[RMDB]
An RNA of 177 nucleotides, treated with DMS and 2A3 and read out base by base. For DMS, 1,174 sequencing reads were counted. Reactivities are given for positions 27 through 126. DMS adducts were read by reverse transcription with MarathonRT. The data come from the RNA Mapping Database (RMDB), library OK2TST.
RNA sequence: GGGAACGACUCGAGUAGAGUCGAAAAAUGGAGUCCUUUGAGCAGCAGGUGAACCAGGUGCUCAACACUGCGCGUGACGACGCCGGGAAGCUCGCGCAGAGCUCACUGGAUGACACCAACAACGUCGUACCCCAGAAGAUUUCGAUCUUCUGGGGUAAAAAGAAACAACAACAACAAC
Reactivity to DMS in 0.01 (KOAc 150mM, MgCl2 10mM, bicine 150mM(pH8.5), 24C), signal-to-noise 2, nucleotides 027 to 126: a150u000g010g020a300g000u000c000c000u000u000u000g030a060g010c020a160g040c090a060g020g000u000g040a110a160c040c050a130g010g020u000g010c070u010c070a030a220c100a160c090u000g000c020g000c030g000u000g010a090c190g010a170c070g000c030c000g010g000g010a140a280g000c010u000c030g000c100g000c020a070g020a100g000c020u000c040a050c020u000g000g000a080u000g000a190c010a050c050c000a040a050c120a040a030c060g020u030c160g000
Reactivity to 2A3 in 0.01 (KOAc 150mM, MgCl2 10mM, bicine 150mM(pH8.5), 24C), signal-to-noise 1, nucleotides 027 to 126: a030u120g000g010a040g030u010c000c000u010u000u040g000a020g010c020a010g000c020a050g000g060u030g070a100a070c000c020a060g100g020u050g030c050u000c030a010a020c020a010c030u100g030c060g000c020g140u000g020a090c000g010a010c010g030c040c030g000g020g020a050a000g020c020u000c010g020c000g040c000a020g050a040g130c000u020c010a040c010u020g000g000a030u060g020a050c000a020c010c030a030a060c030a020a000c050g150u060c030g040